[RMDB]
RNA sequence: GGGAACGACUCGAGUAGAGUCGAAAAAUGUGUUUGGAAGUAAACCAAUUUGAACAAAGAUACCAUCUAAGUUAAGUAGAUGUUCUUCGCCGGUGCUCAUGUCUUCGUAACGUAUACCUGUAACAUGCUAGGAUAUCUCGUUCGCGAGAUAUCCUAGAAAAGAAACAACAACAACAAC
Reactivity to DMS in 0.01 (KOAc 150mM, MgCl2 10mM, bicine 150mM(pH8.5), 24C), signal-to-noise 2, nucleotides 027 to 126: a040u020g000u020g000u000u020u000g000g010a100a130g000u000a090a150a140c070c030a070a070u000u050u000g030a050a060c090a080a090a130g000a030u010a120c060c000a040u020c020u000a060a120g000u010u000a030a130g000u010a040g020a040u010g000u000u010c030u000u000c070g000c020c020g000g000u000g000c050u020c010a030u000g000u010c000u000u000c000g000u000a060a000c180g000u010a050u000a080c030c000u010g010u050a130a040c160a060u020g000
Reactivity to 2A3 in 0.01 (KOAc 150mM, MgCl2 10mM, bicine 150mM(pH8.5), 24C), signal-to-noise 4, nucleotides 027 to 126: a000u060g050u030g040u030u000u100g090g070a170a130g010u280a060a090a100c040c010a090a100u120u050u150g050a070a020c060a110a090a020g060a060u110a100c050c000a010u030c020u070a030a090g140u240u080a090a070g000u060a020g050a010u010g050u010u050c000u020u020c020g040c040c010g010g020u050g000c010u000c050a060u070g050u000c000u000u030c010g100u050a020a070c060g030u020a010u070a120c020c010u060g000u130a130a040c060a070u130g050